[RMDB]
The data come from the RNA Mapping Database (RMDB), library TTRDEL.
This 177-nucleotide RNA was probed chemically with DMS.
The reactions ran in a buffer of 150 mM KOAc, 10 mM MgCl2 and 150 mM bicine (pH 8.5), at 24 C.
For DMS the reverse transcriptase was MarathonRT.
Values cover nucleotides 27 to 126.
For DMS, 1,421 sequencing reads were counted.
RNA sequence: GGGAACGACUCGAGUAGAGUCGAAAAGAUAUGGAACCGCUACCUUGCAACAGCUCGGAAACGAGACAUGCAAGUAGGCGGUUCCUAAGUCAAAAGAGGGAAGGAGCCUUCGGGCUCCUUCCCUCAACGAUGUAUCGUACUUCGGUACGAUACAUCGAAAAGAAACAACAACAACAAC
Reactivity to DMS in 0.01 (KOAc 150mM, MgCl2 10mM, bicine 150mM(pH8.5), 24C), signal-to-noise 2, nucleotides 027 to 126: g020a030u010a300u000g000g000a000a000c000c000g020c000u000a200c300c010u000u010g000c000a020a080c260a140g020c000u000c000g020g000a100a090a210c010g000a010g000a030c090a150u010g000c000a000a000g000u010a190g010g010c000g000g010u000u000c000c000u020a020a100g010u000c040a060a060a110a120g000a000g000g010g010a010a010g000g000a060g010c000c010u000u010c250g040g000g000c000u000c000c000u000u000c000c000c000u020c000a000a020